[RMDB]
This 170-nucleotide RNA was probed chemically with 2A3 and DMS.
In probing experiments dimethyl sulfate is read out at A N1 and C N3, which are open when not base-paired.
The data come from the RNA Mapping Database (RMDB), library 15KLIB.
The reactions ran in a buffer of 150 mM KOAc, 10 mM MgCl2 and 150 mM bicine (pH 8.5), at 24 C.
The 2A3 profile rests on 84,487 reads.
For 2A3 the reverse transcriptase was SuperScript II with manganese.
RNA sequence: GGGAACGACUCGAGUAGAGUCGAAAACUGCUGUUCUUAAUAGCUUGUGCAUCUGCUUUGUUACCUCUAUACCAUUGUGUAUAGUACCUUACACUGCAUUGUACUAUUAUGCUACAUUCUAUUUUACCACGCUUUCAGUUCGCUGAAAGCAAAAGAAACAACAACAACAAC
Reactivity to 2A3 in 0.01 (KOAc 150mM, MgCl2 10mM, bicine 150mM(pH8.5), 24C), signal-to-noise 9, nucleotides 027 to 129: c040u070g020c050u070g040u100u040c020u040u100a080a050u030a040g010c000u040u060g010u010g010c000a020u010c060u070g020c000u030u010u010g020u020u050a060c010c030u000c010u010a010u010a010c020c030a290u180u300g040u030g000u140a000u000a000g000u020a020c000c010u020u020a010c020a000c010u010g000c010a020u030u060g030u030a020c010u040a070u180u030a070u110g030c020u020a030c010a060u070u050c040u110a170u060u110u070u060a100c040c030a070c100
Reactivity to DMS in 0.01 (KOAc 150mM, MgCl2 10mM, bicine 150mM(pH8.5), 24C), signal-to-noise 6, nucleotides 027 to 129: c070u000g060c070u040g000u050u050c080u020u100a070a160u030a000g030c070u010u010g010u020g040c000a010u050c130u030g030c070u000u020u020g020u020u020a070c120c100u030c000u040a000u020a000c030c020a290u090u120g010u000g000u020a020u020a000g000u030a060c160c110u040u030a010c030a000c000u010g000c010a060u020u060g030u000a030c070u000a010u000u020a070u000g050c070u000a000c030a080u000u090c070u030a020u020u030u030u040a120c110c060a070c190